RNA sequence: GGGAACGACUCGAGUAGAGUCGAAAACGCUCGGGCAGCUGACGCUGCGGGCGGUGCGGUCGGUGGAGAACGCCGGUCGACAGCAGAUCAUCCACGCCGUUGAGGAAGACCCCGCGCCUCCGCGGGUUCUCCGAGGCUGGGCUCGCGUAGCUACCGGACUAUGAUAUACCUUCGGGUAUAUCAUAGUAAAAGAAACAACAACAACAAC
Reactivity to DMS in 0.01 (KOAc 150mM, MgCl2 10mM, bicine 150mM(pH8.5), 24C), signal-to-noise 2, nucleotides 027 to 156: c040g000c040u000c020g040g020g050c040a050g050c020u010g000a070c090g000c030u020g020c000g010g000g030c010g020g030u000g040c030g020g000u000c010g020g060u010g030g020a230g000a170a160c030g030c020c000g020g020u000c010g020a080c040a050g000c030a110g000a140u010c070a170u010c010c000a120c090g030c000c010g000u000u000g010a230g000g030a100a050g000a060c040c000c000c010g050c040g020c090c100u000c120c040g000c060g030g010g000u000u000c010u000c020c010g010a170g000g000c000u020g000g010g000c030u010c050g030c040g020u000a000g000c010u010a040c000c010g000g010
Reactivity to 2A3 in 0.01 (KOAc 150mM, MgCl2 10mM, bicine 150mM(pH8.5), 24C), signal-to-noise 2, nucleotides 027 to 156: c050g050c030u010c020g090g070g100c130a030g000c020u120g050a090c100g000c090u110g010c000g000g030g000c020g000g020u100g020c010g030g030u020c000g010g010u030g050g110a190g020a300a130c020g000c000c010g010g020u000c000g010a040c010a010g000c010a030g010a130u200c030a010u010c050c010a040c090g000c030c000g080u120u110g040a050g070g000a140a060g010a010c010c000c000c000g000c020g010c080c140u180c110c090g010c010g000g000g000u010u000c000u000c000c000g020a000g010g010c000u000g010g020g000c020u020c030g020c030g000u040a020g000c020u060a040c000c010g010g010